Notes
An RNA of 177 nucleotides, treated with DMS and 2A3 and read out base by base. For 2A3, 46,173 sequencing reads were counted. It was measured as part of the RMDB library M2PK50. For 2A3 the reverse transcriptase was SuperScript II with manganese. The DMS profile rests on 25,056 reads.

RNA sequence: GGGAACGACUCGAGUAGAGUCGAAAAGGAACGUUGUUCGCAACGUUCCGUGCCGGAAACGGACUUGACGAUCGCGCGCAUGUCGGGAAACCGUAAACGCGAGCAUCAUGGUGUUCGCACCAUGAAACCGUAAGUAAAUUUUCGAAUUUACUUACGGAAAAGAAACAACAACAACAAC
Reactivity to DMS in 0.01 (KOAc 150mM, MgCl2 10mM, bicine 150mM(pH8.5), 24C), signal-to-noise 9, nucleotides 027 to 126: g000g000a010a010c000g010u000u000g010u000u010c210g020c010a010a010c000g010u000u000c000c000g020u010g010c010c000g000g000a080a110a150c010g010g010a080c120u000u000g010a080c120g010a080u000c050g010c020g010c030g000c090a190u000g010u000c020g010g000g000a100a070a170c030c010g010u000a040a100a090c060g010c010g000a040g010c170a150u000c000a000u000g000g010u000g010u000u010c200g010c010a020c010c000a000u000g000a040a100a130
Reactivity to 2A3 in 0.01 (KOAc 150mM, MgCl2 10mM, bicine 150mM(pH8.5), 24C), signal-to-noise 7, nucleotides 027 to 126: g000g000a000a000c010g000u010u010g020u070u100c230g000c100a000a000c000g000u000u000c000c000g000u040g030c000c010g040g030a100a080a020c030g020g030a050c030u050u120g070a060c050g090a110u070c050g000c000g000c000g000c090a050u130g060u140c000g020g010g020a080a060a050c010c010g010u070a050a090a030c040g000c010g010a020g040c020a080u040c000a000u010g000g010u020g020u050u060c200g000c060a000c000c000a010u010g000a040a030a010
For DMS the reverse transcriptase was MarathonRT.